[RMDB]
RNA sequence: GGGAACGACUCGAGUAGAGUCGAAAAGCGUGCGUGUUCGCACGCACGCAAAGCGGCCAGCUCCACGCCGCCAAACAAUAUGGAGCACAAAUGUCAGCAAAAAAAGAAUGGUGUUCGCACCAUUCAACAUUAAGUUGAGCUUCGGCUCAACUUAAUGAAAAGAAACAACAACAACAAC
Reactivity to 2A3 in 0.01 (KOAc 150mM, MgCl2 10mM, bicine 150mM(pH8.5), 24C), signal-to-noise 3, nucleotides 027 to 126: g000c000g000u000g000c010g000u010g030u050u130c230g020c080a000c000g050c020a000c010g000c000a020a060a000g000c000g000g000c000c020a050g000c010u000c000c010a010c040g010c010c000g000c020c050a120a140a010c040a010a040u110a100u270g020g000a000g070c010a000c030a010a070a060u300g080u150c050a050g050c110a100a050a050a010a030a050a080g000a000a000u000g000g000u020g020u030u080c230g020c030a010c000c010a000u010u000c000a000a010
Reactivity to DMS in 0.01 (KOAc 150mM, MgCl2 10mM, bicine 150mM(pH8.5), 24C), signal-to-noise 3, nucleotides 027 to 126: g010c000g080u010g010c000g010u000g000u020u040c260g000c000a000c020g030c000a010c000g000c000a050a080a100g000c010g010g000c010c070a130g000c000u010c020c020a020c270g030c000c000g010c000c190a130a060a070c100a040a020u000a060u010g010g000a000g030c000a170c300a020a090a040u020g000u000c130a040g030c120a000a000a040a080a070a120a080g000a010a000u000g000g010u000g020u000u010c150g010c000a020c000c010a010u000u000c000a050a130